RNA sequence: GGGAACGACUCGAGUAGAGUCGAAAAGAAAAACGAUGCAUGAGCCUAAUAUACGCAAGGCGCUAGCAAAACAAACAAAAUCCGAUGCAAGCGUAUAUUAAAGAAAGCAUUGGAAAAGAAAAGAAAACAUUAAUGGGCUAUUCGUAGCCCAUUAAUGAAAAGAAACAACAACAACAAC
Reactivity to DMS in 0.01 (KOAc 150mM, MgCl2 10mM, bicine 150mM(pH8.5), 24C), signal-to-noise 3, nucleotides 027 to 126: g000a050a120a080a110a050c160g000a100u000g040c020a160u040g000a090g010c020c010u000a060a090u000a030u000a000c010g060c000a140a080g030g020c060g020c090u010a200g030c020a040a080a130a100c200a100a090a080c160a080a030a120a130u010c030c030g000a030u020g030c010a050a100g020c000g000u000a000u020a030u070u020a060a070a070g020a070a100a060g000c000a000u000u000g000g000a000a070a080a130g010a060a020a080a080g010a050a100a040a110
Reactivity to 2A3 in 0.01 (KOAc 150mM, MgCl2 10mM, bicine 150mM(pH8.5), 24C), signal-to-noise 2, nucleotides 027 to 126: g080a030a060a020a010a010c110g030a010u010g010c020a030u080g040a000g020c000c000u040a070a050u020a030u010a050c020g000c030a000a060g020g000c020g000c020u060a050g040c020a010a100a050a100c110a040a110a040c060a040a240a030a040u000c030c000g010a010u060g000c050a080a000g000c000g050u010a030u000a000u040u240a080a050a020g120a030a070a010g000c000a000u000u010g000g040a110a090a000a030g080a010a060a000a010g070a010a050a000a000